[RMDB]
RNA sequence: GGGAACGACUCGAGUAGAGUCGAAAAGAUAUGGACUUACUCCCCACCAGAACUAAGCGUUGAAAUCGGAAACGAUGGAGCUUAGCUCUGAGGUAAGUCCUAAGUCAAAGGUUGGUUCGCCAACCAAUCUGAUUACAAUCUUCGGAUUGUAAUCAGAAAAAGAAACAACAACAACAAC
Reactivity to 2A3 in 0.01 (KOAc 150mM, MgCl2 10mM, bicine 150mM(pH8.5), 24C), signal-to-noise 4, nucleotides 027 to 126: g070a020u200a180u240g000g010a000c000u000u010a020c020u120c060c020c000c000a020c010c010a000g010a010a000c000u000a010a000g010c020g220u300u080g050a050a050a010u010c000g020g010a090a020a020c000g000a000u020g030g020a020g000c000u000u000a000g000c000u000c010u010g020a010g010g000u000a000a000g000u010c000c000u020a080a030g120u100c130a200a040a070g000g020u000u010g030g020u050u190c260g080c100c000a010a000c000c000a000a030
Reactivity to DMS in 0.01 (KOAc 150mM, MgCl2 10mM, bicine 150mM(pH8.5), 24C), signal-to-noise 5, nucleotides 027 to 126: g010a070u020a230u000g010g010a010c000u000u000a010c010u010c100c010c000c060a300c150c000a010g010a020a010c010u000a000a010g020c010g000u000u020g000a070a100a020u000c000g000g010a090a060a120c010g010a010u000g000g000a100g020c000u000u000a000g010c010u000c000u000g000a070g000g000u000a000a000g000u000c000c000u000a030a090g010u010c120a090a130a080g010g020u000u000g000g010u000u010c210g020c020c010a020a010c000c020a040a050
This 177-nucleotide RNA was probed chemically with 2A3 and DMS.
Reactivities are given for positions 27 through 126.
The data come from the RNA Mapping Database (RMDB), library TTRDEL.
For 2A3 the reverse transcriptase was SuperScript II with manganese.
Conditions: 150 mM KOAc, 10 mM MgCl2 and 150 mM bicine (pH 8.5), 24 C.